About this RNA
An RNA of 207 nucleotides, treated with 2A3 and DMS and read out base by base. For 2A3 the reverse transcriptase was SuperScript II with manganese.
RNA sequence: GGGAACGACUCGAGUAGAGUCGAAAAGAUUAAGUGGGAGCGUCGCCCUAUCGGUGCAUCGGAUAUUAAUUAGCCAGUGCGUGGCAUUACGCAUAUUGAUGUCUACUUUGGCGUAGACUCUGCCAAUUUAAGGAUUGAUGGGCAAUCCAGCCCUAGAAAUCAUGAUACGAUUCGUCGUAUCAUGAUUAAAAGAAACAACAACAACAAC
Reactivity to 2A3 in 0.01 (KOAc 150mM, MgCl2 10mM, bicine 150mM(pH8.5), 24C), signal-to-noise 7, nucleotides 027 to 156: g050a040u110u160a090a030g040u060g030g020g000a030g010c010g030u040c010g040c000c010c010u140a190u300c040g020g000u020g010c020a030u040c020g050g010a010u020a040u090u200a200a050u120u110a060g010c020c020a030g010u020g040c030g030u010g030g050c120a050u070u190a020c040g000c030a000u040a080u050u110g040a030u030g010u000c010u010a020c030u110u110u120g090g000c070g000u000a040g010a030c000u000c030u060g040c000c010a050a060u060u100u090a100a040g030g000a020u010u030g020a030u060g010g000g000c000a000a010u020c010c030a020g010c020c000c000u010a040g090a020
Reactivity to DMS in 0.01 (KOAc 150mM, MgCl2 10mM, bicine 150mM(pH8.5), 24C), signal-to-noise 3, nucleotides 027 to 156: g000a130u010u000a040a080g020u000g000g010g000a090g040c070g000u000c060g040c020c000c060u000a100u010c040g010g010u000g030c030a060u000c030g020g000a110u030a060u010u000a060a160u000u000a130g000c020c030a140g020u000g020c030g040u000g010g010c090a100u010u010a040c070g000c070a060u010a110u010u000g010a050u010g020u000c000u000a030c010u000u000u000g000g030c100g000u000a080g000a080c030u000c030u000g010c020c020a050a080u000u000u010a070a110g020g000a110u010u000g000a100u000g000g000g000c040a050a100u010c100c060a160g000c010c000c010u000a080g010a080
The RNA was probed in 150 mM KOAc, 10 mM MgCl2 and 150 mM bicine (pH 8.5) at 24 C. For 2A3, 5,961 sequencing reads were counted. DMS adducts were read by reverse transcription with MarathonRT.